Source information:
This 177-nucleotide RNA was probed chemically with DMS and 2A3. The 2A3 profile rests on 10,937 reads. The RNA was probed in 150 mM KOAc, 10 mM MgCl2 and 150 mM bicine (pH 8.5) at 24 C. 2A3 adducts were read by reverse transcription with SuperScript II with manganese.
RNA sequence: GGGAACGACUCGAGUAGAGUCGAAAAUCUCCGUGAUUCGUCACGGAGAAACAUAAAUAAAAUGGGUUCAACUCCCACCCUUUUCCGAGGGUAUCGGAUACCAACCUUCGCUCUUCGGAGCGAAGAAAGGCUUAGAUAAAUUCGUUUAUCUAAGCCUAAAAGAAACAACAACAACAAC
Reactivity to DMS in 0.01 (KOAc 150mM, MgCl2 10mM, bicine 150mM(pH8.5), 24C), signal-to-noise 4, nucleotides 027 to 126: u000c000u000c000c000g010u000g010a030u000u010c160g020u000c000a000c000g020g010a000g010a010a080a090c050a090u000a080a090a130u010a050a040a090a090u000g000g000g010u000u000c170a070a300c170u000c000c010c010a250c020c000c000u000u010u000u000c010c040g010a030g010g010g000u010a030u000c040g000g000a050u010a070c160c100a060a110c170c010u000u000c000g000c000u000c000u000u010c170g020g000a020g020c000g000a000a010g000a070a070
Reactivity to 2A3 in 0.01 (KOAc 150mM, MgCl2 10mM, bicine 150mM(pH8.5), 24C), signal-to-noise 5, nucleotides 027 to 126: u000c000u000c000c000g000u010g000a020u040u100c170g010u010c130a000c000g000g010a020g000a000a010a000c010a020u280a070a110a010u200a050a110a040a060u060g010g000g000u070u110c030a030a010c040u020c010c000c020a020c010c000c000u080u100u040u000c010c010g010a010g010g010g150u140a040u010c000g000g010a010u030a130c030c020a060a060c010c000u010u000c000g000c010u020c000u030u070c250g100g000a000g000c000g000a000a010g000a040a030